[RMDB]
RNA sequence: GGGAACGACUCGAGUAGAGUCGAAAACACACCAAGCUGUGUGGCAGCUCCCAUGUCCUGCUGGGGUGACAGUGCUGCUGUGUGGGGGACAUGUGUGCUACAGGUGCACAGCUUCAUCCACUCAUUAUAUGGUAUGCACGUUCGCGUGCAUACCAUAAAAAGAAACAACAACAACAAC
Reactivity to DMS in 0.01 (KOAc 150mM, MgCl2 10mM, bicine 150mM(pH8.5), 24C), signal-to-noise 1, nucleotides 027 to 126: c110a140c100a120c100c070a070a110g000c040u000g000u000g020u010g000g010c070a000g000c050u000c010c010c020a040u000g000u010c020c060u000g010c120u000g030g010g020g040u020g020a120c030a030g010u000g030c110u040g000c000u000g000u000g020u010g000g010g000g020g000a000c010a010u000g000u000g000u000g000c000u000a180c140a150g010g020u020g020c000a000c020a000g000c090u000u010c140a070u000c040c030a070c140u000c090a120u000u040a250
Reactivity to 2A3 in 0.01 (KOAc 150mM, MgCl2 10mM, bicine 150mM(pH8.5), 24C), signal-to-noise 1, nucleotides 027 to 126: c060a000c000a010c010c040a030a040g040c050u070g000u000g020u070g080g160c030a010g000c000u020c010c000c000a000u010g020u000c020c000u080g280c080u130g010g020g180g000u090g050a060c050a030g060u070g120c040u030g060c050u010g100u060g000u060g070g070g000g020g000a010c020a020u050g000u000g020u000g000c030u060a090c020a130g230g030u070g020c010a010c000a000g020c000u050u040c000a080u000c000c030a030c020u030c000a110u130u280a150